RNA sequence: GGGAACGACUCGAGUAGAGUCGAAAAGACAAAAUACACUUAGCUAAGAGACAAUCGGAAAGCUUGUUUUUCCAACCAUGCAGUAACCAUUUAAUGUGUCCAGCUAACUUAUAUUAAUUGGAUCAUUUAUUUUUUUGAGAUGGUCUUGCUUUGUCAAAGUCGUAAUAUCAUUCGUGAUAUUACGACUAAAAGAAACAACAACAACAAC
Reactivity to 2A3 in 0.01 (KOAc 150mM, MgCl2 10mM, bicine 150mM(pH8.5), 24C), signal-to-noise 7, nucleotides 027 to 156: g040a010c030a020a140a040a010u220a060c060a030c130u120u100a030g000c020u090a130a010g060a030g030a100c050a070a190u120c100g050g020a100a050a010g020c010u120u090g050u060u080u020u040u020c020c010a020a030c030c030a020u110g000c000a020g040u080a040a060c010c010a030u080u090u170a090a060u080g080u010g040u050c010c010a000g020c030u030a030a040c020u260u130a080u120a100u300u140a100a070u060u030g000g000a000u020c010a000u030u090u100a120u070u110u080u060u030u140u150g060a080g000a020u000g000g000u000c000u050u080g010c000u070u050u050g040u070c010a130a120
Reactivity to DMS in 0.01 (KOAc 150mM, MgCl2 10mM, bicine 150mM(pH8.5), 24C), signal-to-noise 2, nucleotides 027 to 156: g010a190c040a070a060a080a150u000a090c040a100c050u000u000a050g000c020u020a100a080g010a170g000a070c050a060a060u000c080g000g010a060a040a090g050c110u030u010g020u000u000u000u000u000c030c040a090a180c050c050a120u000g020c050a120g000u000a060a080c030c010a050u000u000u010a040a020u000g000u000g020u010c000c020a030g000c000u000a010a030c040u000u000a100u000a060u000u000a030a120u000u000g020g010a030u000c010a020u010u000u000a020u010u000u020u000u010u000u010g020a130g010a050u000g020g020u000c020u000u000g010c010u000u000u010g000u000c030a040a130
Structure probing data (2A3 and DMS) for a 207-nucleotide construct. Source: RMDB library OK3TST, as collected in RNAgym. The RNA was probed in 150 mM KOAc, 10 mM MgCl2 and 150 mM bicine (pH 8.5) at 24 C.